[RMDB]
RNA sequence: GGGAACGACUCGAGUAGAGUCGAAAAGCUGAACGGCAUAACGUAUCAGGCCUGCCGUGGGGAUUUUGUGGUGCGUCUCGACGGCAGCACCUGUCUGCAGUUAUGGAAUAAAGAAGGCAGGGUGGUAGGAGAGUAUCCUUUUCGAAGGAUACUCUCCAAAAGAAACAACAACAACAAC
Reactivity to 2A3 in 0.01 (KOAc 150mM, MgCl2 10mM, bicine 150mM(pH8.5), 24C), signal-to-noise 2, nucleotides 027 to 126: g040c030u050g030a120a010c010g130g020c030a030u030a090a010c000g010u020a050u100c010a000g040g000c010c010u000g010c000c000g000u030g000g020g000g040a010u030u030u140u200g130u100g050g050u100g070c010g000u010c010u000c030g100a000c000g030g000c000a000g000c000a030c000c000u000g020u050c060u080g050c020a040g000u020u030a030u090g020g090a010a050u170a080a100a040g100a040a000g020g000c000a020g020g050g030u080g020g040u080a060
Reactivity to DMS in 0.01 (KOAc 150mM, MgCl2 10mM, bicine 150mM(pH8.5), 24C), signal-to-noise 4, nucleotides 027 to 126: g020c040u000g020a080a120c140g010g030c050a040u000a040a030c030g020u000a140u000c020a020g010g000c300c010u000g000c000c000g020u000g000g010g000g000a020u000u000u000u000g010u000g010g040u010g000c170g010u000c000u000c010g000a020c030g000g030c000a020g010c090a050c010c000u010g000u000c140u000g010c070a130g020u010u000a030u000g000g020a090a170u000a100a100a080g000a140a100g000g020c020a060g000g000g020u000g000g000u010a140